RNA sequence: GGGAACGACUCGAGUAGAGUCGAAAAGAAAGAAAGAAAGAAAGAUAUGAAGUCCUAUUCACGCGCGAUAGGAUAAACUUCAUAUCGAUCGUGUAUGUGCUAACGCACAUACACGAAUGCGCAUGCAGAACUGCAUGCAUGAACAUAGCGCGUGCAACCUCAUAGGAGUAUUCGUACUCCUAUGAGGAAAAGAAACAACAACAACAAC
Reactivity to DMS in 0.01 (KOAc 150mM, MgCl2 10mM, bicine 150mM(pH8.5), 24C), signal-to-noise 2, nucleotides 027 to 156: g010a080a090a070g000a150a070a080g010a130a150a150g000a080a090a170g000a020u000a000u010g010a020a010g000u010c000c000u010a030u000u000c030a050c010g030c010g050c020g000a030u000a010g000g020a120u010a070a080a120c010u000u000c000a000u000a000u010c000g020a050u000c000g020u020g010u000a000u000g010u000g000c010u010a190a210c300g000c000a010c000a000u000a010c000a010c000g000a000a010u000g020c080g000c040a000u000g020c020a080g000a090a140c170u000g000c010a040u010g020c000a030u000g000a070a050c190a130u000a090g010c010g040c000g020u000g000c100a040a140
Reactivity to 2A3 in 0.01 (KOAc 150mM, MgCl2 10mM, bicine 150mM(pH8.5), 24C), signal-to-noise 8, nucleotides 027 to 156: g060a020a050a020g080a060a060a010g080a090a110a010g070a080a130a020g000a000u010a000u000g000a000a000g010u030c000c000u010a010u000u020c110a010c010g000c000g000c000g000a000u000a000g030g000a010u100a050a070a000c000u000u000c000a000u000a000u000c000g000a000u010c000g000u000g000u000a000u000g020u000g010c070u160a170a040c170g000c010a000c000a000u000a000c000a000c000g010a020a010u060g020c020g000c000a000u000g000c010a010g070a300a090c220u060g000c000a010u000g000c020a020u120g040a030a020c080a090u130a040g000c000g000c000g000u000g000c010a030a060